The record gives the reactivity of an RNA of 177 nucleotides to DMS. Values cover nucleotides 27 to 126. The RNA was probed in 150 mM KOAc, 10 mM MgCl2 and 150 mM bicine (pH 8.5) at 24 C. DMS adducts were read by reverse transcription with MarathonRT. The data come from the RNA Mapping Database (RMDB), library TTRDES.
RNA sequence: GGGAACGACUCGAGUAGAGUCGAAAAAAAAAAAGAUAUGGAGCUCGACAUGCUUUAAGGCACUAUUUAUUCGGAAACGAAUAAACGAAUGCCGGAGAGCAACAGCGAGCUCCUAAGUCAAAAAAAACAUUCAUUUAUUGUUCGCAAUAAAUGAAUGAAAAGAAACAACAACAACAAC
Reactivity to DMS in 0.01 (KOAc 150mM, MgCl2 10mM, bicine 150mM(pH8.5), 24C), signal-to-noise 1, nucleotides 027 to 126: a000a020a110a090a020a120a110g000a010u000a300u000g000g010a000g050c000u000c000g000a150c050a250u010g000c000u030u000u000a300a040g010g000c010a000c070u010a270u000u000u000a000u000u010c000g000g000a160a040a160c000g020a000a000u000a000a000a000c000g010a040a070u000g000c000c010g010g030a110g000a000g000c010a060a030c300a110g000c010g000a030g000c020u000c000c000u000a000a050g010u010c010a010a030a000a090a090a160a190a160